[RMDB]
RNA sequence: GGGAACGACUCGAGUAGAGUCGAAAAGUCUGUGCGUUUCCAUUUGAGUAUCCUGAAAACGGGCUUUUCAGCAUGGAAGGUACAUAUUAAAUAGUAGGAGUGCAUAGUGGCCCGUAUAGCAGGCAUUGAGGCGAGGAUUGUUUCGACAAUCCUCGAACCUGUAUUAGUACUUCGGUACUAAUACAGGAAAAGAAACAACAACAACAAC
Reactivity to DMS in 0.01 (KOAc 150mM, MgCl2 10mM, bicine 150mM(pH8.5), 24C), signal-to-noise 3, nucleotides 027 to 156: g020u000c030u000g020u000g010c050g040u010u000u010c020c000a180u000u000u010g010a140g020u000a060u000c030c010u000g000a050a070a170a040c040g010g000g030c050u000u000u000u000c050a220g010c050a100u000g010g020a120a120g000g020u010a040c040a080u000a120u000u000a070a090a170u000a070g000u000a070g000g010a200g020u000g010c050a100u010a140g010u000g010g000c010c000c030g030u000a050u010a170g010c020a030g010g010c080a150u000u000g010a100g010g020c030g030a040g000g020a020u000u000g000u000u000u010c230g020a090c000a020a010u000c000c010u010c000g010a010a040
Reactivity to 2A3 in 0.01 (KOAc 150mM, MgCl2 10mM, bicine 150mM(pH8.5), 24C), signal-to-noise 6, nucleotides 027 to 156: g060u020c060u060g060u040g040c040g020u000u040u000c030c030a090u100u070u110g040a040g030u100a110u100c020c010u020g030a060a030a000a020c020g000g010g020c030u080u080u090u110c050a020g000c000a010u030g060g080a080a050g080g040u060a020c020a020u130a060u090u300a120a160a090u160a050g060u020a020g000g090a050g030u010g010c030a030u060a130g090u040g060g000c000c010c010g000u010a020u050a030g030c000a000g030g000c020a010u060u150g070a050g060g060c000g000a000g000g000a000u000u000g020u010u100u040c050g000a000c000a000a010u000c000c000u000c000g000a000a000
Structure probing data (DMS and 2A3) for a 207-nucleotide construct.
The RNA was probed in 150 mM KOAc, 10 mM MgCl2 and 150 mM bicine (pH 8.5) at 24 C.
It was measured as part of the RMDB library M2RFPK.
The 2A3 profile rests on 5,265 reads.
Reactivities are given for positions 27 through 156.
For DMS, 7,862 sequencing reads were counted.